An RNA of 207 nucleotides, treated with 2A3 and read out base by base. The data come from the RNA Mapping Database (RMDB), library M2RFPK. For 2A3, 773 sequencing reads were counted.

[RMDB]
RNA sequence: GGGAACGACUCGAGUAGAGUCGAAAAACGUGGCCGUGCCUACUACGGUAGGCACGGCCUCGAAUUACGUUCAUCUACUUAAUCGUAGACGCAUCAAUACAUCAUUCAUGGAACGGGGGAUGGUGAAACUAGAAUCAAACGUUCGCGUUUGAUUCAAUCCUCAAUAGUUGUUCGCAACUAUUGAGGAAAAAGAAACAACAACAACAAC
Reactivity to 2A3 in 0.01 (KOAc 150mM, MgCl2 10mM, bicine 150mM(pH8.5), 24C), signal-to-noise 1, nucleotides 027 to 156: a000c000g010u000g000g060c000c000g040u010g000c000c000u020a020c000u020a040c300g130g000u000a000g060g000c000a000c050g010g020c000c000u010c000g000a000a000u130u060a000c000g000u000u000c000a020u000c020u010a030c000u040u220a100a030u220c050g000u000a000g000a020c000g020c010a080u110c040a040a130u080a160c020a000u020c000a020u040u010c020a000u050g030g020a000a000c000g010g000g000g000g010a000u010g010g000u020g030a080a030a040c060u080a100g000a010a000u000c000a000a000a000c000g000u040u010c230g000c000g160u010u030u010g000a000u000u000c000a000a000